An RNA of 177 nucleotides, treated with DMS and read out base by base. DMS adducts were read by reverse transcription with MarathonRT. For DMS, 3,026 sequencing reads were counted. The reactions ran in a buffer of 150 mM KOAc, 10 mM MgCl2 and 150 mM bicine (pH 8.5), at 24 C.
[RMDB]
RNA sequence: GGGAACGACUCGAGUAGAGUCGAAAAGAUAUGGACCGGUAUAGGUCUUUGAUCUACAGUCGGAAACGACUGUAGGGAGACCGUACCCGGUCCUAAGUCAAAACAAGUGCCCUUCGGGGCACUUGAACAAAAUCACAAGGUUCGCCUUGUGAUUUUGAAAAGAAACAACAACAACAAC
Reactivity to DMS in 0.01 (KOAc 150mM, MgCl2 10mM, bicine 150mM(pH8.5), 24C), signal-to-noise 2, nucleotides 027 to 126: g000a020u000a030u010g000g000a010c010c000g000g010u010a020u010a110g090g020u000c000u000u000u020g000a010u010c000u010a000c010a010g010u010c000g020g000a030a020a030c000g020a020c000u000g010u000a000g010g000g000a010g020a000c010c020g030u010a020c230c020c030g030g000u000c000c000u000a000a050g000u000c000a140a130a160a300c020a010a010g010u000g010c010c000c000u000u030c300g030g000g010g020c000a000c000u000u000g000a070a220